[RMDB]
RNA sequence: GGGAACGACUCGAGUAGAGUCGAAAAACAAAGAGAUCGAAAGAGCAAUGUGUAACUCAACAUCCUAGCGAAUGGUUGGGCUCGAAAGAUCGAGUGUUACCAUCACAUCCCGGACGCUAGAAAAAAAGCUCACAUUGUACUUCGGUACAAUGUGAGCAAAAGAAACAACAACAACAAC
Reactivity to 2A3 in 0.01 (KOAc 150mM, MgCl2 10mM, bicine 150mM(pH8.5), 24C), signal-to-noise 1, nucleotides 027 to 126: a000c050a000a120a020g110a040g030a110u090c040g100a080a090a000g010a020g050c050a060a110u120g090u040g030u070a070a070c030u000c120a000a030c000a040u060c000c020u030a010g050c030g070a060a030u000g000g030u030u070g020g060g030c010u030c010g150a140a190a130g240a240u070c040g000a020g000u060g220u070u020a010c020c040a010u060c020a040c020a140u100c000c000c000g010g030a060c000g000c070u050a000g000a010a000a000a000a000a000a010
Structure probing data (2A3) for a 177-nucleotide construct. Reactivities are given for positions 27 through 126. 2A3 is a SHAPE reagent: it acylates the 2'-hydroxyl of flexible nucleotides of all four kinds.